[RMDB]
RNA sequence: GGGAACGACUCGAGUAGAGUCGAAAACGUGCGUACUGGGCCGCCGGCACAAUGUUCGACCCAGCCGUCUCAGAGGACGCGGUUCGACGACGAUCAGCCAGCAGGUCAGCGGGGUCCUCCUAGCUAGACUGCUCCCAUAUUUCGAUAUGGGAGCAGUAAAAGAAACAACAACAACAAC
Reactivity to 2A3 in 0.01 (KOAc 150mM, MgCl2 10mM, bicine 150mM(pH8.5), 24C), signal-to-noise 1, nucleotides 027 to 126: c010g060u060g040c050g040u080a040c060u100g030g070g000c000c020g020c010c000g030g000c060a050c000a060a170u150g020u070u070c050g000a050c000c000c000a010g060c120c030g050u040c000u040c080a220g020a140g080g080a000c010g000c000g050g000u000u010c020g000a060c020g000a020c050g030a140u110c020a000g020c030c000a030g050c040a050g000g060u010c010a010g020c020g000g000g000g030u080c020c000u000c010c010u030a040g030c010u030a050g030
Reactivity to DMS in 0.01 (KOAc 150mM, MgCl2 10mM, bicine 150mM(pH8.5), 24C), signal-to-noise 3, nucleotides 027 to 126: c090g010u000g020c100g030u000a080c090u020g020g000g020c090c040g030c060c050g010g020c020a100c080a120a080u010g030u000u000c010g000a050c060c000c000a090g010c170c050g010u000c020u000c120a180g020a120g030g000a020c040g020c060g000g000u000u000c040g010a040c050g000a130c140g020a100u000c130a140g000c000c030a050g010c000a040g020g010u000c040a050g000c050g000g010g010g000u000c020c010u000c040c020u000a050g030c120u020a170g000
Structure probing data (2A3 and DMS) for a 177-nucleotide construct.
For 2A3, 1,536 sequencing reads were counted.
The data come from the RNA Mapping Database (RMDB), library OK2TRN.
DMS adducts were read by reverse transcription with MarathonRT.